[RMDB]
An RNA of 170 nucleotides, treated with DMS and 2A3 and read out base by base. For DMS, 3,410 sequencing reads were counted. The reactions ran in a buffer of 150 mM KOAc, 10 mM MgCl2 and 150 mM bicine (pH 8.5), at 24 C.

RNA sequence: GGGAACGACUCGAGUAGAGUCGAAAAACCUGCGUCUAUACAGUUGCAAUGUGCUUUAGACACUUCUUCUGGGUUUUAGCUUAUUUUAGUAAGAAACAUGUAGAAGUUUUUACUGAUGGUAAGCUUAUAGGGUGGCGGUUCGCCGCCACCAAAAGAAACAACAACAACAAC
Reactivity to DMS in 0.01 (KOAc 150mM, MgCl2 10mM, bicine 150mM(pH8.5), 24C), signal-to-noise 2, nucleotides 027 to 129: a080c030c040u060g040c040g030u020c010u060a050u020a100c090a010g030u000u000g030c140a060a090u020g000u040g020c100u040u000u060a070g000a100c020a100c010u010u020c030u000u070c050u000g020g000g090u000u000u000u000a050g000c000u000u000a020u000u060u000u000a030g050u010a040a000g070a000a000a000c000a250u000g050u090a100g030a150a070g050u050u030u020u000u000a000c040u000g020a120u040g030g050u040a000a000g000c010u020u090a000u030a010g000
Reactivity to 2A3 in 0.01 (KOAc 150mM, MgCl2 10mM, bicine 150mM(pH8.5), 24C), signal-to-noise 2, nucleotides 027 to 129: a000c000c000u070g000c000g160u040c070u040a040u000a140c040a080g000u040u050g060c080a000a000u250g100u060g000c000u240u160u000a060g100a140c030a000c000u020u000c000u000u000c000u050g000g130g130u050u000u050u260a010g010c080u050u000a040u000u020u000u020a020g000u000a000a100g000a150a000a000c110a000u210g000u010a060g030a190a000g070u000u000u110u000u000a000c010u010g000a000u100g000g000u000a040a040g000c000u100u070a020u110a000g040